[RMDB]
RNA sequence: GGGAACGACUCGAGUAGAGUCGAAAACGUCCUUCCCUUUUCUUAUUAUUCCGAGGAUGUUUCCCAGCCAGGGAUUUUCGUCCUCGAGUUUCUUGAUGGUUCUCCUGCUCUUCCGGAGCUUUCUUUCACUCUAUAUUAACUUCGGUUAAUAUAGAGUAAAAGAAACAACAACAACAAC
Reactivity to DMS in 0.01 (KOAc 150mM, MgCl2 10mM, bicine 150mM(pH8.5), 24C), signal-to-noise 3, nucleotides 027 to 126: c120g010u000c030c020u000u000c020c020c010u000u010u000u000c070u020u010a060u010u000a100u010u010c110c010g010a020g030g000a010u000g010u000u000u000c000c010c010a230g000c220c300a200g010g010g000a030u000u000u010u010c010g000u000c000c000u000c000g010a050g010u000u000u000c050u000u000g010a090u010g010g010u000u000c040u000c010c040u000g020c010u000c030u000u010c140c110g020g010a050g000c110u000u010u000c000u000u000u010c050
Reactivity to 2A3 in 0.01 (KOAc 150mM, MgCl2 10mM, bicine 150mM(pH8.5), 24C), signal-to-noise 2, nucleotides 027 to 126: c020g090u040c000c040u030u050c040c000c000u050u100u110u060c080u140u140a280u150u050a090u180u050c040c030g010a000g000g000a010u010g010u020u000u030c000c000c000a030g200c120c090a020g000g000g090a030u140u070u110u200c000g000u010c000c000u000c000g020a020g000u060u050u030c050u050u110g040a090u080g030g050u070u040c000u000c020c030u000g010c000u020c020u090u050c080c050g060g000a060g050c080u020u010u000c000u000u050u000c010